[RMDB]
RNA sequence: GGGAACGACUCGAGUAGAGUCGAAAACAAUAUUUAUUGAUGUUACAAGGCUUUAUUUCUUCAGUUUUCAUCACGUUUAACUAGUAAUAGUGACCUUUGAAUAACUCUGUGUUUUCAUUAAAUCGUAGAGAAUAACUGAGUUCGCUCAGUUAUUCUCAAAAGAAACAACAACAACAAC
Reactivity to DMS in 0.01 (KOAc 150mM, MgCl2 10mM, bicine 150mM(pH8.5), 24C), signal-to-noise 3, nucleotides 027 to 126: c040a050a080u000a090u000u010u010a060u010u000g010a070u000g010u000u000a040c080a030a100g000g000c030u000u000u000a010u000u000u000c020u000u010c140a030g010u000u000u000u000c030a120u000c150a110c250g000u010u000u000a030a030c020u000a040g010u000a040a030u010a040g020u000g010a080c000c030u000u000u010g020a050a060u000a020a030c020u000c080u010g000u000g010u000u010u000u000c030a100u010u010a050a060a120u000c110g020u000a170
Reactivity to 2A3 in 0.01 (KOAc 150mM, MgCl2 10mM, bicine 150mM(pH8.5), 24C), signal-to-noise 2, nucleotides 027 to 126: c030a050a040u150a090u120u250u110a070u060u100g020a010u060g010u060u000a040c030a050a010g020g000c000u050u140u070a010u060u100u000c010u060u080c020a030g010u000u010u040u040c020a040u090c040a040c030g010u010u020u050a010a000c000u000a000g030u040a000a050u020a040g060u030g210a300c000c000u040u000u100g030a110a010u050a050a000c010u040c030u040g040u010g050u150u040u060u020c040a010u000u170a080a060a030u090c010g020u020a040
Structure probing data (DMS and 2A3) for a 177-nucleotide construct. For 2A3 the reverse transcriptase was SuperScript II with manganese. Source: RMDB library RFMREP, as collected in RNAgym.